An RNA of 207 nucleotides, treated with 2A3 and DMS and read out base by base. For DMS, 2,664 sequencing reads were counted. For 2A3, 840 sequencing reads were counted. DMS adducts were read by reverse transcription with MarathonRT. It was measured as part of the RMDB library OK3TST. Values cover nucleotides 27 to 156.

[RMDB]
RNA sequence: GGGAACGACUCGAGUAGAGUCGAAAAGAUUAAGUGGGAGCGUCGCCCUUUCGGUGCAUCGGAUAUUAAUUAGCCAGUGCGUGGCAAUACGCAUAUUGAUGUCUACUUUGGCGUAGACUGUGCCAAUUUAAGGAUUGAUGGGCAAUCCAGCCCUAGAAUACCUACCUCGUUUCGACGAGGUAGGUAUAAAAGAAACAACAACAACAAC
Reactivity to 2A3 in 0.01 (KOAc 150mM, MgCl2 10mM, bicine 150mM(pH8.5), 24C), signal-to-noise 2, nucleotides 027 to 156: g080a040u170u180a030a040g040u090g040g030g000a060g010c010g080u020c010g040c000c000c070u010u050u010c020g000g000u040g040c000a020u060c030g050g000a020u030a010u120u230a160a100u030u050a000g020c000c020a030g010u000g010c000g020u010g000g100c180a030a060u140a020c010g000c020a000u020a100u010u130g030a050u040g000u000c000u010a050c000u140u140u140g060g000c030g010u000a030g000a020c030u010g000u040g010c010c020a050a060u050u120u040a060a000g080g010a030u080u130g010a050u120g030g000g000c000a010a020u000c010c030a000g000c000c000c020u020a040g090a040
Reactivity to DMS in 0.01 (KOAc 150mM, MgCl2 10mM, bicine 150mM(pH8.5), 24C), signal-to-noise 1, nucleotides 027 to 156: g030a160u030u000a020a120g010u000g000g020g010a050g030c070g020u000c040g020c020c000c030u000u000u000c060g040g040u000g000c030a080u000c070g040g000a050u000a050u000u000a040a100u000u000a080g020c010c030a130g040u000g040c030g040u000g020g010c130a090a090u000a030c010g020c010a020u000a100u000u000g030a150u010g040u000c000u000a010c050u000u010u000g040g020c070g020u000a000g000a040c050u000g050u020g050c060c000a020a080u000u020u010a100a080g000g010a100u000u010g000a240u020g000g030g000c000a110a130u020c110c050a130g000c010c010c010u000a060g030a120